Chemical mapping of a 207-nucleotide RNA with 2A3. The RNA was probed in 150 mM KOAc, 10 mM MgCl2 and 150 mM bicine (pH 8.5) at 24 C.

RNA sequence: GGGAACGACUCGAGUAGAGUCGAAAAGGCUGAAUUCGUUCAGCCAAAAAUCCUAAGUCUCAAGACAUGGGAGGAGCGAAGAACAUAUCGGAAACGAUAUGGGAGCUCCCAAUCCAACAGCUUGAGAUAUGGAAAAAAAACCCGGUUCGCCGGGUAAUCUAACAGUAGAAUUCGUUCUACUGUUAGAAAAAGAAACAACAACAACAAC
Reactivity to 2A3 in 0.01 (KOAc 150mM, MgCl2 10mM, bicine 150mM(pH8.5), 24C), signal-to-noise 1, nucleotides 027 to 156: g040g000c010u080g010a030a040u090u020c080g020u110u010c010a030g000c020c010a000a070a000a000a070u030c010c000u030a080a030g060u010c000u020c000a000a090g010a150c030a150u030g010g010g010a110g010g000a000g040c020g100a300a030g010a160a000c000a000u010a000u020c000g020g000a060a060a040c020g000a000u000a000u000g010g010g010a000g030c000u000c030c020c000a030a020u040c010c000a040a110c020a120g030c000u010u000g000a000g000a000u020a020u000g010g040a040a000a020a000a010a300a000a010c030c070c090g000g010u000u000c080g000c000c000g000g040g000u010a000a060